[RMDB]
RNA sequence: GGGAACGACUCGAGUAGAGUCGAAAAAAGCUUCAACGCCUUUUUUUCCGAUCUUCUUUAGCACCGGGCUAGGGAGUAAGCCCGUGGAACCUUAGUUUUGUUCCCUCGGGACUUACUUGUGGUUCCUGUGGUGCACUCCUGACCCUGCUGCUUUGAACUUGAACUUAAGGUUCGCCUUAAGUUCAAGAAAAGAAACAACAACAACAAC
Reactivity to 2A3 in 0.01 (KOAc 150mM, MgCl2 10mM, bicine 150mM(pH8.5), 24C), signal-to-noise 3, nucleotides 027 to 156: a000a000g060c080u300u200c120a180a060c140g060c040c030u060u020u010u010u010u030u050c040c010g060a120u040c080u100u010c020u030u180u060a010g000c000a010c030c020g000g000g030c020u070a070g030g020g010a000g000u070a090a020g010c010c010c030g030u050g000g000a000a000c000c000u030u020a040g020u040u200u060u150g090u220u080c020c000c040u090c120g070g000g000a000c000u000u010a010c000u020u050g120u140g080g010u000u020c000c010u020g140u220g040g000u090g000c040a010c000u000c000c000u020g040a080c000c000c000u010g000c040u000g010c000u010u020u080g080a060a050
This 207-nucleotide RNA was probed chemically with 2A3. Source: RMDB library VIROID, as collected in RNAgym.